Chemical mapping of a 207-nucleotide RNA with 2A3 and DMS. For 2A3 the reverse transcriptase was SuperScript II with manganese. It was measured as part of the RMDB library OK3TST. DMS adducts were read by reverse transcription with MarathonRT. For 2A3, 3,261 sequencing reads were counted. The RNA was probed in 150 mM KOAc, 10 mM MgCl2 and 150 mM bicine (pH 8.5) at 24 C.

[RMDB]
RNA sequence: GGGAACGACUCGAGUAGAGUCGAAAAAAUAUCGGCCUCUACGCCGGUGUAUACACGCCUCUCAAGGCCGUCACCUCGCUCAAUACGUGGGCCGGCGCCAUCGUCGGUGGCAUCCCUCCUCUCAUGGGCUGGGCCGCGGCCGCUGGCGAGGCUGCCAUCAACUAUAUCUGUUCGCAGAUAUAGUUGAAAAAGAAACAACAACAACAAC
Reactivity to 2A3 in 0.01 (KOAc 150mM, MgCl2 10mM, bicine 150mM(pH8.5), 24C), signal-to-noise 4, nucleotides 027 to 156: a000a000u180a030u060c020g000g010c020c030u080c110u080a020c080g050c070c010g030g000u010g000u000a110u020a070c120a020c070g020c000c000u060c010u030c090a050a040g040g010c070c010g060u060c050a080c020c000u050c040g010c010u020c040a110a140u120a210c160g040u090g010g020g000c020c080g010g000c010g020c020c000a220u070c000g050u030c040g010g020u030g000g040c000a100u110c010c000c010u040c000c000u050c010u050c060a140u250g000g020g050c120u040g020g020g000c100c060g090c040g060g000c010c000g000c020u010g020g000c030g000a000g010g000c070u070g000c000c000a050
Reactivity to DMS in 0.01 (KOAc 150mM, MgCl2 10mM, bicine 150mM(pH8.5), 24C), signal-to-noise 2, nucleotides 027 to 156: a070a060u000a020u000c000g040g010c010c030u000c110u000a070c060g000c010c010g000g020u000g040u020a080u020a120c080a070c050g010c020c000u010c070u000c070a100a070g030g030c020c040g020u010c120a100c000c010u010c160g010c020u000c100a100a100u010a070c070g010u010g010g010g040c030c020g020g010c170g040c010c020a040u010c040g010u000c070g040g030u000g020g100c010a240u010c000c010c010u000c030c000u020c070u010c140a240u000g030g000g000c020u000g000g010g030c180c080g060c040g000g000c000c000g000c040u000g000g010c010g000a100g000g000c000u000g020c010c030a210